[RMDB]
RNA sequence: GGGAACGACUCGAGUAGAGUCGAAAAAGGCGUGUUGCUGCAUGUCUGUGAUCCCAGCUACUUAGGAGGCUGAGGUGGGAGGAUCACUUGAGUUCAGGAGUUUGAGGCUGCAAUGAGCCAUGAUCACGUCACUGCACUCCAGCCUGGGUGACAGAGCCAUGGCUGGAGACUUCGGUCUCCAGCCAUGAAAAGAAACAACAACAACAAC
Reactivity to DMS in 0.01 (KOAc 150mM, MgCl2 10mM, bicine 150mM(pH8.5), 24C), signal-to-noise 1, nucleotides 027 to 156: a050g020g050c020g040u000g000u020u000g010c060u000g000c020a050u000g000u010c020u040g020u010g040a150u000c030c010c010a180g000c000u030a040c080u010u000a060g050g020a070g000g050c000u000g020a050g040g050u000g010g020g000a110g040g030a060u000c020a030c040u010u030g000a080g060u000u000c020a100g000g030a110g030u000u020u000g010a130g020g020c000u020g020c030a240a130u000g020a040g050c000c020a080u000g000a070u010c030a080c060g020u000c020a060c040u010g020c030a140c030u000c030c030a050g010c050c010u040g000g000g030u000g010a120c000a080g000a110g030c230
Reactivity to 2A3 in 0.01 (KOAc 150mM, MgCl2 10mM, bicine 150mM(pH8.5), 24C), signal-to-noise 2, nucleotides 027 to 156: a000g120g000c040g010u110g020u060u080g090c080u140g020c040a080u140g050u070c040u000g170u090g060a130u110c010c010c020a020g000c050u140a150c050u150u190a060g000g040a020g070g080c040u050g070a070g100g010u000g020g000g060a200g000g010a030u020c000a000c000u010u090g050a110g070u000u070c030a040g000g050a020g050u080u190u300g120a130g050g000c050u070g040c020a000a130u100g020a000g000c010c010a040u010g010a020u030c010a030c110g110u060c010a030c100u040g030c040a080c210u010c000c000a010g060c000c000u000g000g000g000u100g000a040c000a030g000a020g000c000